[RMDB]
RNA sequence: GGGAACGACUCGAGUAGAGUCGAAAAACAGAAGGGUGAAAGUUCAAGCAAGCUAGCCGGCAAAAAAGCAAACAUGACCACCAAGGAUAAAAGAGAUCUUAUCCAAGGAUGCAAAAGAUAAUCUCACAAAAGCUUCAUUCGUUCGCGAAUGAAGCAAUCAGAAUUUCAUGUUCGCAUGAAAUUCUGAAAAAGAAACAACAACAACAAC
Reactivity to DMS in 0.01 (KOAc 150mM, MgCl2 10mM, bicine 150mM(pH8.5), 24C), signal-to-noise 1, nucleotides 027 to 156: a150c010a040g000a060a000g000g000g000u000g010a090a080a130g050u000u000c040a140a120g030c020a060a180g050c060u000a090g010c030c020g000g060c060a000a070a060a080a040a040g000c040a040a050a070c040a070u000g000a170c100c000a120c040c020a040a300g000g000a050u000a010a050a020a060g000a160g010a130u000c080u010u000a040u000c020c010a070a210g020g010a050u000g020c060a090a020a090a140g000a030u010a030a050u000c000u000c040a070c030a030a040a090a160g000c000u010u010c000a010u000u000c000g000u000u000c300g030c000g000a000a030u000g000a010a000g000c040a000a040
Reactivity to 2A3 in 0.01 (KOAc 150mM, MgCl2 10mM, bicine 150mM(pH8.5), 24C), signal-to-noise 4, nucleotides 027 to 156: a000c040a030g070a080a070g040g000g000u040g030a140a060a020g030u100u050c050a030a010g030c010a050a010g020c020u050a010g020c010c050g030g000c080a060a080a040a030a020a010g060c040a060a060a020c030a060u090g050a060c030c000a000c020c010a030a040g000g010a010u020a050a050a020a030g090a020g010a010u000c010u030u020a000u000c000c010a010a030g020g010a000u070g000c020a000a130a030a000g010a010u100a110a060u070c030u020c070a060c050a070a130a030a030g000c010u010u000c000a010u000u000c000g020u020u100c230g010c010g060a000a000u000g000a000a000g000c000a000a010